[RMDB]
RNA sequence: GGGAACGACUCGAGUAGAGUCGAAAAGUGGGGCCCUGGACCCUGGACGUGAAAAUUGUUUGAUUGAGCUUCUCUACGGUCUUAUAGGUGAUCCUGAGCCCAAAGCGUAAGGUGUUCCGUGGGAAAAAGUCCAUGGGUGAGUGAGGAUUAUGGAAAGAGUAGUCUAUUCUUUCGAGAAUAGACUACUAAAAGAAACAACAACAACAAC
Reactivity to 2A3 in 0.01 (KOAc 150mM, MgCl2 10mM, bicine 150mM(pH8.5), 24C), signal-to-noise 3, nucleotides 027 to 156: g110u120g000g000g000g040c030c020c010u020g020g040a000c040c000c040u030g020g010a010c010g060u070g120a090a060a080a110u220u170g130u210u140u180g150a150u040u090g020a020g020c000u070u020c030u020c030u110a030c030g050g000u020c000u050u160a140u150a240g010g000u040g040a060u020c010c030u030g020a020g000c030c000c000a030a040a000g030c010g030u060a020a010g020g000u040g060u090u060c030c050g010u040g000g030g000a090a140a010a030a020g050u020c040c000a080u090g040g000g000u070g020a040g010u050g030a050g000g000a040u180u070a050u200g040g020a040a030a030g090
Reactivity to DMS in 0.01 (KOAc 150mM, MgCl2 10mM, bicine 150mM(pH8.5), 24C), signal-to-noise 2, nucleotides 027 to 156: g030u010g020g000g070g000c020c030c020u000g030g010a050c060c020c000u010g000g020a030c040g000u020g000a060a090a090a080u010u000g010u000u000u000g030a170u000u030g000a170g030c020u000u000c020u010c020u000a100c060g020g010u010c020u000u000a110u010a060g030g020u010g000a100u000c010c020u000g010a180g020c010c020c020a060a050a150g030c060g020u000a060a090g020g000u000g020u000u010c030c010g020u020g000g010g000a040a060a080a120a130g000u000c020c020a080u010g030g010g000u000g010a100g030u000g000a080g010g010a100u000u010a090u010g010g010a120a070a160g000